Conditions: 150 mM KOAc, 10 mM MgCl2 and 150 mM bicine (pH 8.5), 24 C. The record gives the reactivity of an RNA of 177 nucleotides to DMS and 2A3. Source: RMDB library TTRDES, as collected in RNAgym.
[RMDB]
RNA sequence: GGGAACGACUCGAGUAGAGUCGAAAAGAUAUGGACGUCCUGUUCUUUUGACGCGGAUCAUGUCGGAAACGACAUGAAUCGCGAUAAGAACCUGACGUCCUAAGUCAAAACGUGUCUUCGGACACGAGUUAGUUCUCCUGUUCGCAGGAGAACUAACAAAAGAAACAACAACAACAAC
Reactivity to DMS in 0.01 (KOAc 150mM, MgCl2 10mM, bicine 150mM(pH8.5), 24C), signal-to-noise 3, nucleotides 027 to 126: g000a050u000a300u020g020g010a030c000g020u000c000c060u020g020u000u000c000u010u000u010u000g020a200c120g010c000g000g010a070u000c010a020u000g020u000c000g030g010a130a130a220c020g010a020c000a010u000g000a030a030u000c000g000c000g020a120u000a020a010g010a020a000c000c070u000g000a000c010g020u000c000c000u000a020a100g000u010c030a140a030a100a210c010g020u000g000u000c000u000u010c190g020g020a000c000a010c020g000a080
Reactivity to 2A3 in 0.01 (KOAc 150mM, MgCl2 10mM, bicine 150mM(pH8.5), 24C), signal-to-noise 3, nucleotides 027 to 126: g010a020u080a050u150g010g010a000c010g010u020c030c040u050g010u020u000c020u030u110u110u160g300a150c050g000c000g000g020a030u010c000a000u010g020u050c010g000g040a080a060a060c010g000a020c000a000u000g000a010a030u020c000g000c000g010a010u060a030a000g000a010a010c020c030u020g010a000c000g000u020c000c000u000a010a020g020u000c030a030a020a070a160c010g000u000g000u000c010u050u080c300g140g000a000c000a000c010g010a010